[RMDB]
RNA sequence: GGGAACGACUCGAGUAGAGUCGAAAAGCCCGAAAGUUCGCUUUCGGGCAAAAGAAAGCUCCUGCGGGAGCAAAGCACACGCAGAAAAACUGUGCAAAAGCAAAAGUACCGUGUUCGCACGGUACAACAUUAAGUAAGGGUUCGCCCUUACUUAAUGAAAAGAAACAACAACAACAAC
Reactivity to DMS in 0.01 (KOAc 150mM, MgCl2 10mM, bicine 150mM(pH8.5), 24C), signal-to-noise 3, nucleotides 027 to 126: g010c010c010c010g010a020a010a020g010u000u020c270g030c010u010u000u000c000g040g030g030c010a020a010a040a070g000a160a120a180g010c030u000c000c000u000g010c190g040g020g000a020g010c010a000a030a130g010c000a000c020a020c200g030c070a070g010a080a090a110a080a060c070u000g010u000g010c010a120a080a090a130g000c200a050a100a080a100g020u000a010c000c000g020u000g010u010u000c160g010c000a000c000g000g000u000a000c000a080a130
Reactivity to 2A3 in 0.01 (KOAc 150mM, MgCl2 10mM, bicine 150mM(pH8.5), 24C), signal-to-noise 3, nucleotides 027 to 126: g000c030c000c000g010a020a000a010g040u130u220c250g020c170u010u000u000c000g000g000g020c000a000a010a010a010g010a010a050a000g010c020u010c010c000u060g040c230g070g000g000a020g000c010a010a080a000g010c000a010c010a000c080g070c100a040g210a110a170a020a030a010c030u030g000u010g010c030a050a080a000a030g090c050a060a080a030a040g000u000a000c000c010g010u000g030u040u080c220g010c060a000c000g000g000u000a000c000a000a000
Chemical mapping of a 177-nucleotide RNA with DMS and 2A3. For DMS the reverse transcriptase was MarathonRT. Values cover nucleotides 27 to 126. The RNA was probed in 150 mM KOAc, 10 mM MgCl2 and 150 mM bicine (pH 8.5) at 24 C.